[RMDB]
The record gives the reactivity of an RNA of 177 nucleotides to 2A3 and DMS. The data come from the RNA Mapping Database (RMDB), library OK2TRN.
RNA sequence: GGGAACGACUCGAGUAGAGUCGAAAAGAUGAGUUUGGAAUUGGACCGGGCUCAUGAGUUGGGUGUUUUUCGCGCCAUUGGCAUGACUACCCGCCAAUUAUGGAAGCUGAUGUUCAUUGAGACCGGCACCUGAUCCUAAAUUCGUUUAGGAUCAGGUAAAAGAAACAACAACAACAAC
Reactivity to 2A3 in 0.01 (KOAc 150mM, MgCl2 10mM, bicine 150mM(pH8.5), 24C), signal-to-noise 2, nucleotides 027 to 126: g070a080u140g030a040g090u040u110u120g090g100a130a110u060u070g030g050a090c080c000g000g000g000c020u010c030a010u040g040a050g100u130u210g050g020g000u100g060u070u110u040u090u110c070g000c000g030c030c040a030u080u140g040g020c010a020u070g030a110c020u080a090c040c010c010g000c000c000a040a030u140u110a100u190g070g020a060a030g000c050u050g030a070u100g080u040u020c040a060u100u180g010a040g010a040c000c000g000g020c010
Reactivity to DMS in 0.01 (KOAc 150mM, MgCl2 10mM, bicine 150mM(pH8.5), 24C), signal-to-noise 5, nucleotides 027 to 126: g000a070u000g010a050g010u000u000u000g000g020a130a120u010u010g010g010a180c050c030g010g010g000c070u000c000a010u010g000a060g010u000u000g010g010g000u000g010u000u000u000u010u000c110g020c090g020c050c050a120u000u010g010g020c010a050u000g010a090c140u010a100c070c030c050g000c010c020a030a060u000u010a100u000g000g000a080a070g010c060u010g000a100u010g000u010u000c040a070u000u000g010a090g010a090c020c010g010g010c170
The reactions ran in a buffer of 150 mM KOAc, 10 mM MgCl2 and 150 mM bicine (pH 8.5), at 24 C.
2A3 adducts were read by reverse transcription with SuperScript II with manganese.
Reactivities are given for positions 27 through 126.